[RMDB]
RNA sequence: GGGAACGACUCGAGUAGAGUCGAAAAGAUAUGGAUUCUUUCGAAGAACAUUACCGACUGAUCGGAAACGAUCAGUCAUGGGUAAUGGGAGAAAGGAAUCCUAAGUCAAAGGCAUCUUCGGAUGCCACAUAUUAGAACAGUUCGCUGUUCUAAUAUGAAAAGAAACAACAACAACAAC
Reactivity to DMS in 0.01 (KOAc 150mM, MgCl2 10mM, bicine 150mM(pH8.5), 24C), signal-to-noise 9, nucleotides 027 to 126: g000a060u010a300u010g000g010a010u000u000c000u000u000u000c010g000a140a210g010a130a230c010a000u000u000a000c000c010g010a020c000u000g000a010u000c000g000g010a120a110a200c000g010a010u000c000a000g010u000c000a020u010g040g010g010u000a000a010u000g000g010g000a120g000a020a010a020g020g000a020a010u000c000c000u000a050a130g010u000c060a090a130a150g020g010c010a010u000c000u000u010c230g030g000a010u000g000c000c010a040
Reactivity to 2A3 in 0.01 (KOAc 150mM, MgCl2 10mM, bicine 150mM(pH8.5), 24C), signal-to-noise 9, nucleotides 027 to 126: g040a020u100a060u160g010g000a000u010u020c000u020u030u030c110g240a300a090g020a120a020c010a010u010u010a000c010c010g010a000c010u000g000a000u010c000g020g050a080a080a060c020g000a010u010c000a000g000u000c000a010u070g060g000g000u010a000a010u010g000g030g010a060g020a010a040a050g170g080a010a050u000c000c000u020a160a030g080u050c070a110a060a060g000g000c000a000u010c010u100u130c300g170g000a000u010g000c000c000a000